[RMDB]
RNA sequence: GGGAACGACUCGAGUAGAGUCGAAAAGGGGUCGGAGAGGAUCGAGGAUUAGACAUGAGCUGAAGCCUCCACGGCUCAACAGCUAAUCUACCCACCGAUCACCUCUCCGACGGAGGCACCCAAAACUACAAUGAAACCUUCGGGUUUCAUUGUAGAACCCAGAUAUGGGUUUCGACCCAUAUCUGGGAAAAGAAACAACAACAACAAC
Reactivity to 2A3 in 0.01 (KOAc 150mM, MgCl2 10mM, bicine 150mM(pH8.5), 24C), signal-to-noise 2, nucleotides 027 to 156: g040g020g030g020u000c030g010g000a020g000a000g000g010a040u030c060g010a020g020g020a020u010u000a030g060a070c160a200u120g030a000g000c010u050g030a160a000g020c000c010u000c040c010a030c010g000g030c010u000c000a040a030c080a020g120c000u000a000a000u020c010u050a080c040c070c100a130c040c030g020a020u070c050a040c060c000u020c010u000c010c000g000a010c010g000g000a000g010g000c000a060c000c000c000a050a050a010a060c000u000a010c000a000a000u050g000a000a010a000c000c040u180u200c300g030g010g000u000u000u010c000a000u000u000g000u000a000g000a000a010